[RMDB]
Background:
Source: RMDB library OK2TRN, as collected in RNAgym. Structure probing data (DMS) for a 177-nucleotide construct.
RNA sequence: GGGAACGACUCGAGUAGAGUCGAAAAUGCCGUACCACACCCUGUUAAGCAAGGUUUAAUCCAAUCAUUAGGUGUGUUCUUUGAUACAAUGUUGGUUUGUACAGCAACUGCAAUCAUGAUUUUACUAAUUUAGUCUCACCUUCGGGUGAGACUAAAUAAAAGAAACAACAACAACAAC
Reactivity to DMS in 0.01 (KOAc 150mM, MgCl2 10mM, bicine 150mM(pH8.5), 24C), signal-to-noise 1, nucleotides 027 to 126: u000g010c010c030g060u000a040c150c080a060c100a070c000c000c020u010g000u020u010a080a090g010c110a060a110g010g000u000u000u000a110a060u000c060c030a090a130u000c070a050u010u010a060g000g010u000g030u000g000u010u000c040u000u010u000g000a080u000a110c070a060a100u000g020u010u000g020g050u010u000u000g000u000a050c100a070g000c040a020a020c050u000g000c140a040a010u000c040a080u010g000a060u050u010u000u020a110c130u000a100
The RNA was probed in 150 mM KOAc, 10 mM MgCl2 and 150 mM bicine (pH 8.5) at 24 C.